Structure probing data (DMS) for a 177-nucleotide construct. The RNA was probed in 150 mM KOAc, 10 mM MgCl2 and 150 mM bicine (pH 8.5) at 24 C. The data come from the RNA Mapping Database (RMDB), library OK2TRN. DMS adducts were read by reverse transcription with MarathonRT.
[RMDB]
RNA sequence: GGGAACGACUCGAGUAGAGUCGAAAAAAAACCUUACCUAUGACAAAAAAAGACGCACGUAAGUUUAUGCGUAUGUUCUUCUCUGGUGCUGUUGAAGUAGAACUUGAUAAGCAAGGGCGUAUUAACAACUCAUAAUCGGUUUCGACCGAUUAUGAGUAAAAGAAACAACAACAACAAC
Reactivity to DMS in 0.01 (KOAc 150mM, MgCl2 10mM, bicine 150mM(pH8.5), 24C), signal-to-noise 1, nucleotides 027 to 126: a060a030a040a040c030c010u020u010a150c040c030u010a050u000g000a110c100a010a000a010a030a100a070a060g000a020c050g010c090a010c060g000u010a070a090g020u010u000u010a040u010g010c020g010u040a040u000g010u010u000c030u000u000c040u000c020u020g030g030u010g030c040u000g000u000u020g000a030a080g050u000a050g000a040a210c110u000u000g010a070u020a120a050g010c030a050a050g010g010g010c190g000u000a070u000u000a080a070c140a060